[RMDB]
RNA sequence: GGGAACGACUCGAGUAGAGUCGAAAAGAGUUUAUCUGGCCAAGCAUACUGGGACCACUCCUGCGGGAGUUAAGGCCAUACGGACAGCCGGGUCCACUGCCGAUUGGCGGGUAUACCGCCUUAUUGACCUGUAGGCUCAGUUCGCUGAGUCUACAGGAAAAGAAACAACAACAACAAC
Reactivity to DMS in 0.01 (KOAc 150mM, MgCl2 10mM, bicine 150mM(pH8.5), 24C), signal-to-noise 7, nucleotides 027 to 126: g000a070g000u010u020u040a030u010c020u010g000g020c020c030a080a100g000c100a080u030a090c150u030g010g000g010a020c010c010a090c010u000c000c000u000g010c150g030g010g000a010g000u010u050a070a050g000g020c010c030a090u010a090c040g010g010a030c070a160g000c000c010g000g000g000u000c000c010a080c130u020g000c020c020g010a300u020u020g000g000c000g010g000g000u030a080u060a120c000c000g010c000c000u000u020a030u010u010g000a300
Reactivity to 2A3 in 0.01 (KOAc 150mM, MgCl2 10mM, bicine 150mM(pH8.5), 24C), signal-to-noise 9, nucleotides 027 to 126: g060a010g010u050u090u060a100u070c050u080g090g000c010c010a040a020g050c030a070u100a170c080u160g020g010g040a030c010c020a010c020u010c010c010u050g020c260g050g010g000a010g010u060u160a060a040g010g000c010c020a030u080a050c060g040g040a030c030a020g030c010c000g010g010g010u000c010c010a010c010u030g010c010c010g050a080u010u040g000g010c020g000g010g010u080a120u100a090c010c000g020c000c000u030u100a150u030u070g050a040